[RMDB]
RNA sequence: GGGAACGACUCGAGUAGAGUCGAAAAGAUAUGGAUGGCCACGGAGCAACAGCUAGCUCGGAAACGAGCUAGACAUGCUCCGUGGUCCAUCCUAAGUCAAACAAAUUACGCUUCGGCGUAAUUUGAACAUAGGAAACUCCUUCGGGAGUUUCCUAUGAAAAGAAACAACAACAACAAC
Reactivity to DMS in 0.01 (KOAc 150mM, MgCl2 10mM, bicine 150mM(pH8.5), 24C), signal-to-noise 2, nucleotides 027 to 126: g000a050u010a300u010g000g010a000u010g000g010c010c000a000c000g030g010a000g000c010a060a080c300a200g010c000u000a010g000c000u000c000g000g010a150a100a270c000g010a000g010c000u000a000g010a040c080a200u010g010c000u000c000c000g040u000g000g000u010c020c000a000u010c000c010u000a030a090g000u010c010a120a130a300c020a010a010a020u000u000a000c000g020c000u000u010c230g020g000c000g000u010a000a000u000u000u010g020a160a250
The record gives the reactivity of an RNA of 177 nucleotides to DMS. For DMS, 1,759 sequencing reads were counted. Conditions: 150 mM KOAc, 10 mM MgCl2 and 150 mM bicine (pH 8.5), 24 C. Source: RMDB library TTRDES, as collected in RNAgym.